[RMDB]
RNA sequence: GGGAACGACUCGAGUAGAGUCGAAAAGUGACAGUGACAGUGACUCUGACAGUCACAGACUGAGACUCUGACAGUCAGACUGAGACUCUCUCACUCUCUCACUCUGACAGACUGAGACUGAGUGACAUCUGCUGCAUGAAUUCGUUCAUGCAGCAGAAAAAGAAACAACAACAACAAC
Reactivity to 2A3 in 0.01 (KOAc 150mM, MgCl2 10mM, bicine 150mM(pH8.5), 24C), signal-to-noise 2, nucleotides 027 to 126: g080u070g050a030c070a040g030u020g040a030c050a030g020u040g130a060c040u040c060u170g050a050c060a020g020u020c020a000c000a080g040a000c010u040g050a000g020a080c010u020c020u080g020a040c060a050g020u010c000a020g000a010c050u050g010a010g020a080c010u060c000u000c000u000c080a010c050u010c000u000c000u000c000a000c020u050c020u050g030a030c000a060g060a010c040u000g030a010g000a040c060u040g020a020g030u060g030a020c010a090
Reactivity to DMS in 0.01 (KOAc 150mM, MgCl2 10mM, bicine 150mM(pH8.5), 24C), signal-to-noise 3, nucleotides 027 to 126: g010u000g010a080c030a060g010u000g000a110c070a090g010u000g010a090c080u010c080u000g020a080c140a070g020u000c000a080c090a150g020a110c040u000g000a060g020a090c040u000c010u000g000a140c200a070g010u000c000a030g000a040c060u000g010a030g010a040c080u000c060u010c150u000c090a050c090u000c060u000c010u000c000a020c090u000c010u000g030a050c090a060g000a110c110u010g000a030g000a140c100u000g000a050g020u010g010a060c230a090